[RMDB]
An RNA of 177 nucleotides, treated with DMS and 2A3 and read out base by base.
Values cover nucleotides 27 to 126.
For 2A3 the reverse transcriptase was SuperScript II with manganese.
The 2A3 profile rests on 9,791 reads.
The RNA was probed in 150 mM KOAc, 10 mM MgCl2 and 150 mM bicine (pH 8.5) at 24 C.
Source: RMDB library 15KREP, as collected in RNAgym.
RNA sequence: GGGAACGACUCGAGUAGAGUCGAAAAUCCGUCCAACCCCUUCCCCCGAGGGUCGCCCAGGAAUGGCGGGACCCACUCGACUGGGGUCCGCGUUCCAUCCUUUCUUACCUUGUGGCCGGCAUGGUCCGCUACUACUAAUGUUCGCAUUAGUAGUAGCAAAAGAAACAACAACAACAAC
Reactivity to DMS in 0.01 (KOAc 150mM, MgCl2 10mM, bicine 150mM(pH8.5), 24C), signal-to-noise 6, nucleotides 027 to 126: u010c010c000g010u010c040c040a120a260c070c020c000c020u000u010c020c010c000c020c030g020a080g010g000g020u000c050g010c020c010c030a130g010g010a030a030u000g020g040c010g010g010g000a030c000c000c000a030c030u010c220g000a110c170u000g000g010g010g000u000c010c010g000c000g000u000u000c010c000a130u010c090c080u000u000u000c060u010u000a100c040c030u000u000g020u010g010g000c030c020g010g000c060a050u000g010g010u000c240c120
Reactivity to 2A3 in 0.01 (KOAc 150mM, MgCl2 10mM, bicine 150mM(pH8.5), 24C), signal-to-noise 5, nucleotides 027 to 126: u010c000c010g040u020c030c030a070a080c020c000c010c000u030u030c000c010c000c000c000g010a020g020g010g010u030c020g040c040c020c010a010g020g050a030a020u060g300g070c010g000g000g010a010c000c030c010a030c020u160c070g160a180c090u050g000g020g010g010u000c010c000g040c000g010u020u000c000c000a030u060c000c000u060u100u040c020u040u040a070c020c000u020u050g040u100g040g020c010c000g020g050c040a050u100g040g000u050c020c040